The record gives the reactivity of an RNA of 207 nucleotides to 2A3 and DMS.

RNA sequence: GGGAACGACUCGAGUAGAGUCGAAAAUCUGUCACGCUGGGUCUGAAGCACUUCGAACUACCACGCGAAACGGUCUGAAGCGCGCACGGACCGGAGUGGCGAAGUGAUAAGGACCUGUGCUGAAGCGCGCACGGCAACCGAAAGGUGCGAUUUUAUACUAUAGUUUCUACUUCGGUAGAAACUAUAGAAAAGAAACAACAACAACAAC
Reactivity to 2A3 in 0.01 (KOAc 150mM, MgCl2 10mM, bicine 150mM(pH8.5), 24C), signal-to-noise 6, nucleotides 027 to 156: u030c030u040g200u180c150a010c100g000c010u030g000g000g010u000c010u060g040a290a030g040c000a000c000u000u000c000g030a070a040c040u160a120c210c010a050c020g050c090g160a300a280a070c010g000g010u000c000u020g070a260a070g000c000g000c000g000c000a020c030g010g000a000c030c000g000g040a070g000u000g010g000c000g000a000a000g000u000g000a010u000a020a000g010g000a000c010c000u000g000u000g000c000u020g020a090a050g000c000g000c000g000c000a010c010g010g000c010a020a020c010c000g060a110a010a020g030g000u000g010c000g010a000u080u060u100u200a160u060a080
Reactivity to DMS in 0.01 (KOAc 150mM, MgCl2 10mM, bicine 150mM(pH8.5), 24C), signal-to-noise 3, nucleotides 027 to 156: u010c050u010g000u020c030a110c030g010c020u000g010g010g020u010c010u000g020a170a180g030c010a010c020u000u000c010g030a090a130c070u000a280c030c020a030c030g030c090g020a120a090a180c020g020g030u010c000u000g000a080a070g020c000g000c000g040c020a300c050g040g010a060c010c020g020g010a090g010u000g000g010c000g030a020a030g020u010g000a020u000a180a300g010g010a050c000c010u010g000u030g020c010u000g000a060a120g040c070g060c000g020c050a300c040g020g000c000a090a100c050c030g000a090a140a130g000g020u000g010c020g000a210u000u000u000u020a070u000a300

Annotation: For DMS the reverse transcriptase was MarathonRT. For 2A3, 9,245 sequencing reads were counted. The data come from the RNA Mapping Database (RMDB), library RNAMAK. The reactions ran in a buffer of 150 mM KOAc, 10 mM MgCl2 and 150 mM bicine (pH 8.5), at 24 C.